[RMDB]
RNA sequence: GGGAACGACUCGAGUAGAGUCGAAAAGUCUAGCGAAGGGAUCCCACCCGGGACACACGCAAGUCGCGAAUUAGGCCGACCGGCCAAGGUCAAUAGCAGAACUCAACUGCAUGAGUAAGCUAGACGAGAUAUAGUAGCGUUUCGACGCUACUAUAUCAAAAGAAACAACAACAACAAC
Reactivity to DMS in 0.01 (KOAc 150mM, MgCl2 10mM, bicine 150mM(pH8.5), 24C), signal-to-noise 7, nucleotides 027 to 126: g000u000c010u000a020g000c010g010a150a080g010g010g010a080u010c000c000c010a300c060c010c030g010g000g010a060c130a090c070a130c100g000c050a080a080g010u010c080g030c050g000a110a100u000u010a130g010g010c040c050g000a080c140c250g000g010c050c070a040a090g000g010u000c020a070a100u000a100g000c020a040g010a080a060c150u010c160a060a060c050u010g010c020a080u010g010a100g020u000a080a150g000c000u000a000g000a020c000g010a110
Reactivity to 2A3 in 0.01 (KOAc 150mM, MgCl2 10mM, bicine 150mM(pH8.5), 24C), signal-to-noise 6, nucleotides 027 to 126: g000u000c000u000a020g000c000g100a180a140g030g010g020a040u030c000c010c000a080c010c010c000g000g030g000a030c030a010c010a020c070g020c050a100a080g150u150c030g030c030g070a100a170u190u070a180g060g000c050c020g070a180c070c100g050g000c020c020a000a040g050g000u030c020a040a120u050a150g000c020a010g030a160a070c050u070c220a050a140c040u030g000c000a050u080g020a030g100u030a010a010g000c000u000a000g000a010c010g000a020